[RMDB]
RNA sequence: GGGAACGACUCGAGUAGAGUCGAAAAGCAGGACGAAGCAUAUUUCUGUUUCUGGAGGAUUAUUUAUAAUCUGCCGGAAAGUCUUGCAGGUGGCUGGGAUAUGUUCAGUCUGGUAGAAUUAAGCACGAAAACGUGUCCUUGUUCGCAAGGACACGAAGGCAAAUAUAUUCUUCGGAAUAUAUUUGCCAAAAGAAACAACAACAACAAC
Reactivity to 2A3 in 0.01 (KOAc 150mM, MgCl2 10mM, bicine 150mM(pH8.5), 24C), signal-to-noise 2, nucleotides 027 to 156: g010c000a010g040g000a020c020g030a030a020g040c020a010u030a080u080u090u040c090u100g110u020u040u010c010u010g000g010a030g010g010a010u010u000a030u060u300u020a120u040a020a030u010c020u070g030c010c010g000g030a030a000a000g030u000c030u070u160g060c070a050g040g090u090g020g000c000u040g040g000g000a010u050a010u140g080u140u040c100a050g010u010c010u020g050g000u060a090g060a160a080u090u090a050a060g010c070a020c120g030a000a000a100a050c010g000u000g000u000c000c000u000u030g010u010u030c150g000c120a000a010g000g000a000c000a000c010g000a000a000
Reactivity to DMS in 0.01 (KOAc 150mM, MgCl2 10mM, bicine 150mM(pH8.5), 24C), signal-to-noise 1, nucleotides 027 to 156: g010c060a130g010g000a050c020g040a160a130g000c050a070u010a020u010u000u000c060u010g010u000u000u020c000u000g050g010a040g010g000a010u000u000a030u000u000u000a130u010a060a000u000c010u000g000c000c010g000g010a010a090a060g010u000c020u000u000g040c030a240g040g040u000g010g010c050u010g000g030g000a050u010a020u000g020u000u000c080a210g010u000c040u000g020g030u010a100g010a060a130u000u000a060a140g060c040a080c070g010a100a040a070a210c010g020u000g020u010c010c000u000u000g000u000u010c290g010c050a020a000g020g010a020c000a000c010g010a010a040
This 207-nucleotide RNA was probed chemically with 2A3 and DMS. Values cover nucleotides 27 to 156. For DMS the reverse transcriptase was MarathonRT. For 2A3 the reverse transcriptase was SuperScript II with manganese. The RNA was probed in 150 mM KOAc, 10 mM MgCl2 and 150 mM bicine (pH 8.5) at 24 C.